[RMDB]
RNA sequence: GGGAACGACUCGAGUAGAGUCGAAAAUCUGAAUCCUUCGGGAUUCAGAAAAGGCGGAGGGCCCGCCGGAACCGCUAUACAGGUGGAGGUUGCAAACCACCCAAAGGACUAACUUCGGUUAGUCCAAGUAUAUACCGACCUUCGGGUCGGUAUAUACAAAAGAAACAACAACAACAAC
Reactivity to DMS in 0.01 (KOAc 150mM, MgCl2 10mM, bicine 150mM(pH8.5), 24C), signal-to-noise 1, nucleotides 027 to 126: u000c000u010g000a010a010u000c000c000u000u020c180g020g020g010a010u000u000c000a000g010a020a030a140a160g010g020c020g030g040a190g000g000g010c140c030c000g020c010c020g000g000a050a080c000c010g000c110u010a020u020a120c300a090g000g010u010g000g000a020g010g010u000u000g000c060a060a150a010c020c010a040c000c010c060a060a120a150g000g010a000c000u000a000a010c000u000u000c150g010g000u000u010a000g000u000c010c010a010a050
The record gives the reactivity of an RNA of 177 nucleotides to DMS. Conditions: 150 mM KOAc, 10 mM MgCl2 and 150 mM bicine (pH 8.5), 24 C. Source: RMDB library M2PK50, as collected in RNAgym.